[RMDB]
RNA sequence: GGGAACGACUCGAGUAGAGUCGAAAAUCUUAAAAGGCACCAAACGCAAGCCGCGGCUUUCUCUGGACACACAAACCAUCCUGCAGCAAGGCGCUGCCGUGGGAGAGAUCGUGCGCCAACUGGCCGACCCAAGAUAGUGAUUCGUCACUAUCUUGGGAAAAGAAACAACAACAACAAC
Reactivity to 2A3 in 0.01 (KOAc 150mM, MgCl2 10mM, bicine 150mM(pH8.5), 24C), signal-to-noise 3, nucleotides 027 to 126: u010c010u030u060a040a100a040a080g040g000c050a030c090c020a150a110a080c100g020c050a040a030g010c010c000g030c020g020g030c010u020u050u000c030u000c030u070g040g020a030c000a000c010a010c020a130a080a080c010c000a050u080c010c030u070g000c010a010g000c020a040a180g300g000c070g000c050u010g020c000c010g040u080g000g000g020a050g000a000g000a100u070c030g020u050g010c070g010c010c000a050a090c060u060g060g020c000c010g040a060
Reactivity to DMS in 0.01 (KOAc 150mM, MgCl2 10mM, bicine 150mM(pH8.5), 24C), signal-to-noise 3, nucleotides 027 to 126: u010c050u000u000a040a050a110a150g000g000c020a070c080c080a060a070a060c160g030c120a090a100g010c070c050g010c030g030g030c030u000u010u000c030u000c060u000g020g010a100c070a050c060a050c140a070a090a100c120c030a100u010c040c030u000g010c040a010g000c030a060a100g010g000c130g020c040u000g010c010c120g010u010g000g000g010a060g010a100g000a060u000c090g000u000g000c050g010c020c020a050a070c120u000g010g000c020c030g030a250
Conditions: 150 mM KOAc, 10 mM MgCl2 and 150 mM bicine (pH 8.5), 24 C. Chemical mapping of a 177-nucleotide RNA with 2A3 and DMS. For 2A3, 4,256 sequencing reads were counted. For 2A3 the reverse transcriptase was SuperScript II with manganese.